Overview
Chemical mapping of a 177-nucleotide RNA with DMS and 2A3. For 2A3, 2,747 sequencing reads were counted. Values cover nucleotides 27 to 126. For DMS, 1,176 sequencing reads were counted. Conditions: 150 mM KOAc, 10 mM MgCl2 and 150 mM bicine (pH 8.5), 24 C. It was measured as part of the RMDB library TTRDEL.
RNA sequence: GGGAACGACUCGAGUAGAGUCGAAAAGAUAUGGACCAUGGGCAGCCCAUUCAGCCAUCGAUCUCGGAAACGAGGGAGGCUGAUGGGCGAUGCAUGGUCCUAAGUCAAACUGUGCUUCGGCACAGAACGUCAGUGUUGUGUUCGCACAACACUGACGAAAAGAAACAACAACAACAAC
Reactivity to DMS in 0.01 (KOAc 150mM, MgCl2 10mM, bicine 150mM(pH8.5), 24C), signal-to-noise 1, nucleotides 027 to 126: g010a050u000a300u000g010g010a010c000c000a010u000g000g010g000c250a240g000c020c000c010a040u000u010c020a000g000c000c000a290u020c180g010a040u000c000u000c000g000g010a040a160a120c010g010a000g020g010g000a010g070g010c000u000g000a000u010g000g000g020c010g000a000u000g000c010a060u000g010g000u000c010c000u010a020a030g000u000c020a070a090a160c010u000g000u000g000c010u000u020c120g010g000c000a000c010a000g010a040a160
Reactivity to 2A3 in 0.01 (KOAc 150mM, MgCl2 10mM, bicine 150mM(pH8.5), 24C), signal-to-noise 2, nucleotides 027 to 126: g040a000u090a050u150g010g000a000c020c020a000u000g000g300g010c090a050g070c000c000c000a030u270u230c040a020g020c000c010a160u300c010g050a070u010c000u000c010g060g000a070a040a020c010g000a000g010g010g000a000g010g000c010u000g000a000u010g020g000g000c010g030a000u000g060c000a000u010g030g010u010c000c000u000a000a000g010u010c000a000a040a060c020u020g000u010g000c040u060u070c300g080g000c000a000c010a000g030a080a010